[RMDB]
RNA sequence: GGGAACGACUCGAGUAGAGUCGAAAAGACGCUGAUGCGAUCGACUGUAAGAUAGAUAAAAUGAGCAGACAGAUACGUACGGCAAGUAUCGUCGCCAGAACUACAGUCGCAAAUUGCCGUACGAAGAGAUCACUAGCCUAUUCGUAGGCUAGUGAUCAAAAGAAACAACAACAACAAC
Reactivity to 2A3 in 0.01 (KOAc 150mM, MgCl2 10mM, bicine 150mM(pH8.5), 24C), signal-to-noise 7, nucleotides 027 to 126: g080a020c030g000c070u190g100a140u240g040c030g060a110u050c010g010a010c000u010g000u040a150a060g050a180u180a040g150a050u180a140a140a050a130u160g030a040g030c060a050g040a020c020a030g020a040u050a070c010g040u030a000c000g000g000c000a030a000g020u030a020u060c040g010u000c010g010c030c030a060g030a100a020c020u020a000c010a010g000u000c000g010c050a070a120a030u020u030g000c000c010g000u000a010c030g020a060a060g040a010
Reactivity to DMS in 0.01 (KOAc 150mM, MgCl2 10mM, bicine 150mM(pH8.5), 24C), signal-to-noise 3, nucleotides 027 to 126: g000a040c010g000c020u010g000a060u040g030c020g010a220u060c000g000a020c010u010g000u010a010a080g000a210u020a200g030a210u050a010a080a090a100u000g000a110g000c000a070g020a020c040a060g000a060u010a030c010g000u020a000c020g010g020c000a030a040g000u000a010u010c060g030u000c020g000c000c000a050g020a090a120c130u000a010c000a000g000u000c000g070c250a070a050a100u000u000g020c000c000g030u000a100c070g020a100a060g000a180